Conditions: 150 mM KOAc, 10 mM MgCl2 and 150 mM bicine (pH 8.5), 24 C. This 177-nucleotide RNA was probed chemically with DMS and 2A3. It was measured as part of the RMDB library OK2TRN. 2A3 adducts were read by reverse transcription with SuperScript II with manganese.

RNA sequence: GGGAACGACUCGAGUAGAGUCGAAAAUUUCAGCUGAAUAAUGCCGGCCGAAAGGGCUAACCCGGGAAUGGCAAUGCGACUGUUAGACGAAGUCAGUCUAGCUGAUAGAGCUAGUUCGUAGUGCGGACGGGUAUCGGGGAUUCGUCUCCGGUGCUCGAAAAGAAACAACAACAACAAC
Reactivity to DMS in 0.01 (KOAc 150mM, MgCl2 10mM, bicine 150mM(pH8.5), 24C), signal-to-noise 9, nucleotides 027 to 126: u000u000u000c020a060g010c030u000g010a110a130u010a110a100u010g010c150c020g010g010c030c020g010a040a050a070g000g010g010c170u010a090a100c050c010c010g010g010g010a090a100u010g010g010c030a050a060u000g010c040g010a060c040u000g010u000u000a040g010a080c040g010a180a180g010u000c060a060g010u000c080u000a050g010c000u000g000a130u000a060g000a090g010c010u000a030g010u000u000c030g020u000a050g010u000g010c030g010g000a170
Reactivity to 2A3 in 0.01 (KOAc 150mM, MgCl2 10mM, bicine 150mM(pH8.5), 24C), signal-to-noise 9, nucleotides 027 to 126: u040u050u040c020a020g000c010u070g050a080a040u170a160a050u140g080c030c000g030g000c010c010g110a140a060a030g070g010g000c050u040a060a070c020c000c000g020g010g060a090a130u130g060g000c000a010a030u050g010c010g010a010c020u030g040u100u060a050g010a060c040g050a100a030g090u080c030a010g010u000c070u070a040g000c010u010g040a110u080a080g120a010g010c010u020a010g040u060u060c020g010u030a030g050u020g050c040g030g060a040